[RMDB]
RNA sequence: GGGAACGACUCGAGUAGAGUCGAAAAAAGAUCAAGUGCCUGAUCAGAGUGUUCAGGCCUGACAACUAUGUCAGUCUUGUGCUCUGCCUUACUGUACAAGCAUGAACUCACUAUCUCUAAACUCGUGCCCUCGCUAGUGGUUCGCCACUAGCGAGGGAAAAGAAACAACAACAACAAC
Reactivity to 2A3 in 0.01 (KOAc 150mM, MgCl2 10mM, bicine 150mM(pH8.5), 24C), signal-to-noise 3, nucleotides 027 to 126: a000a000g150a000u070c060a000a120g000u080g200c010c010u010g000a000u070c010a090g110a010g190u210g040u120u100c000a000g010g000c010c000u000g000a010c010a170a020c170u190a200u300g000u020c020a000g080u000c060u050u000g010u030g000c010u020c050u110g000c030c040u090u090a090c090u010g010u110a080c030a030a000g000c000a000u050g000a000a040c000u000c010a030c010u070a170u080c030u040c060u090a100a150a080c010u070c090g080u100g020